[RMDB]
RNA sequence: GGGAACGACUCGAGUAGAGUCGAAAAUCAGAAUCAGGCCGGAGUGUUUAGCGCUCGGUAAACACGGUCGUACAUCCAGCCGGUAGCCUGGUUCCUUGCAUUGAGUGAUGUACGGAGUUUAUAGAGCAAAAGAAAGACCUGUUCGCAGGUCUUUCAAGUCUUAUCUGAAGUUCGCUUCAGAUAAGACAAAAGAAACAACAACAACAAC
Reactivity to 2A3 in 0.01 (KOAc 150mM, MgCl2 10mM, bicine 150mM(pH8.5), 24C), signal-to-noise 6, nucleotides 027 to 156: u110c000a010g030a010a010u010c000a000g020g000c020c050g150g080a260g030u030g010u020u030u030a070g020c060g000c030u000c000g020g020u010a000a000a000c020a010c010g040g030u040c010g000u010a010c000a010u000c030c020a020g120c060c040g080g060u110a020g000c010c000u000g010g020u010u020c000c020u080u150g050c030a130u080u200g070a060g050u140g020a010u000g010u010a000c000g040g000a040g010u170u230u070a130u090a060g010a000g010c010a030a030a010a070g000a000a000a000g000a000c000c000u010g010u040u060c170g020c100a000g000g000u000c000u000u000u000c000a000a000
Reactivity to DMS in 0.01 (KOAc 150mM, MgCl2 10mM, bicine 150mM(pH8.5), 24C), signal-to-noise 1, nucleotides 027 to 156: u020c040a060g010a030a040u000c010a020g040g030c000c070g000g020a220g050u010g060u000u000u000a080g010c080g000c010u000c000g070g020u000a010a010a050c030a130c030g020g010u000c000g000u000a020c010a060u000c020c000a280g000c040c080g020g000u000a070g020c040c010u020g000g010u010u010c010c010u000u000g030c100a170u000u000g030a200g030u000g000a020u000g030u000a030c030g000g010a120g000u000u010u000a060u000a150g000a040g020c020a040a060a100a210g000a030a030a030g010a010c000c000u010g070u000u010c250g040c020a020g020g000u000c000u000u000u010c000a050a110